Structure probing data (2A3) for a 177-nucleotide construct. The RNA was probed in 150 mM KOAc, 10 mM MgCl2 and 150 mM bicine (pH 8.5) at 24 C. It was measured as part of the RMDB library OK1LIB.
RNA sequence: GGGAACGACUCGAGUAGAGUCGAAAACGUGACCUCAUGCCUGCAUACAUGUGCUCGGCUACAAGUAUGCAUACACACUCUUCCAUGCCCUACUUGAAAAUCCAGACUCCUUCCCCAGAGGUCUGGCCCUCGGACGCUGUUUCGACAGCGUCCGAGGAAAAGAAACAACAACAACAAC
Reactivity to 2A3 in 0.01 (KOAc 150mM, MgCl2 10mM, bicine 150mM(pH8.5), 24C), signal-to-noise 2, nucleotides 027 to 126: c000g050u070g070a070c000c030u010c020a060u250g000c000c020u010g000c000a000u000a020c040a040u040g030u000g050c080u090c180g200g050c060u160a020c000a080a000g000u000a010u060g010c020a010u120a130c050a020c000a000c030u030c030u080u000c030c000a040u040g090c030c000c030u070a160c030u020u080g100a010a030a110a130u030c010c000a030g040a090c000u040c010c000u040u080c000c000c000c000a030g030a030g000g080u000c000u010g010g000c000